The record gives the reactivity of an RNA of 207 nucleotides to DMS and 2A3. For DMS, 4,844 sequencing reads were counted. It was measured as part of the RMDB library M2RFPK. For DMS the reverse transcriptase was MarathonRT. For 2A3 the reverse transcriptase was SuperScript II with manganese. The reactions ran in a buffer of 150 mM KOAc, 10 mM MgCl2 and 150 mM bicine (pH 8.5), at 24 C.

RNA sequence: GGGAACGACUCGAGUAGAGUCGAAAAAGAUCGAUUACGAUCGAUCAAUGAUGCCCCUCACCCACCUCUGAAGAUCCCAGGUGGGCGAGGGAACGGAGCACCGGAUCACGAGCAGUACGCUGCUCGAAAAAGAACUAGACCUUCGGGUCUAGUUCAACAUCUAAUAGUACUUCGGUACUAUUAGAUGAAAAGAAACAACAACAACAAC
Reactivity to DMS in 0.01 (KOAc 150mM, MgCl2 10mM, bicine 150mM(pH8.5), 24C), signal-to-noise 3, nucleotides 027 to 156: a070g010a020u010c010g010a050u000u000a080c270g040a090u000c000g000a010u000c020a080a070u010g010a100u010g000c070c000c010c010u000c010a010c000c010c000a010c020c000u000c030u010g020a150a190g020a200u000c050c010c010a040g000g030u010g010g020g000c020g010a010g030g000g010a010a000c020g010g020a140g000c000a300c060c030g020g020a120u000c050a240c030g000a050g000c010a060g030u000a090c300g070c010u000g000c000u000c010g000a000a040a060a120a060g010a020a010c010u000a000g010a020c000c000u000u000c300g060g010g000u000c000u000a010g020u000u000c000a030a150
Reactivity to 2A3 in 0.01 (KOAc 150mM, MgCl2 10mM, bicine 150mM(pH8.5), 24C), signal-to-noise 6, nucleotides 027 to 156: a000g000a000u000c000g010a000u050u070a080c200g050a020u010c000g000a010u000c010a010a080u180g060a060u160g050c000c000c000c000u010c010a020c000c000c000a000c010c000u050c060u090g090a140a050g040a130u060c010c020c010a000g010g000u000g010g010g000c000g000a000g000g000g010a010a040c060g050g040a060g080c080a070c100c060g010g060a060u080c060a020c090g000a000g000c000a000g020u070a030c260g000c090u000g000c010u000c000g010a010a010a000a000a000g000a000a000c000u000a000g000a000c000c000u030u120c260g070g000g000u000c000u000a000g000u000u000c000a000a000